[RMDB]
RNA sequence: GGGAACGACUCGAGUAGAGUCGAAAAAACGUCUCAUCUGCGAGGUCACCACUUGGAAGGCACUGUCAUGAGCCCUCAGACUUGCGAUUCUUUAAUCAGCAUUCCUGAAACCUAGGUGUCCUUAGGAGUCAAUACGAUCCUUCGGGAUCGUAUUGACAAAAGAAACAACAACAACAAC
Reactivity to DMS in 0.01 (KOAc 150mM, MgCl2 10mM, bicine 150mM(pH8.5), 24C), signal-to-noise 2, nucleotides 027 to 126: a080a020c270g000u000c040u000c010a210u000c000u000g010c160g010a040g000g000u000c030a040c050c010a070c180u010u000g000g020a250a090g050g000c010a080c040u000g000u010c210a100u000g000a080g000c000c000c160u010c050a000g010a110c090u000u010g000c030g000a030u000u000c160u010u010u000a040a030u000c030a160g030c010a070u000u010c040c000u010g010a040a040a140c050c030u000a050g000g020u000g010u000c030c040u000u000a210g010g000a300
Reactivity to 2A3 in 0.01 (KOAc 150mM, MgCl2 10mM, bicine 150mM(pH8.5), 24C), signal-to-noise 1, nucleotides 027 to 126: a000a020c060g010u000c020u020c010a120u000c030u040g080c080g030a010g000g000u000c030a000c020c020a070c070u100u060g000g020a080a010g020g010c030a000c110u090g130u230c150a150u130g090a040g000c000c010c040u020c010a020g020a080c020u010u060g020c000g040a030u030u050c020u050u240u170a030a020u020c000a020g010c000a010u000u090c030c000u030g010a070a040a050c000c000u020a020g030g010u010g030u050c000c000u030u010a040g100g000a030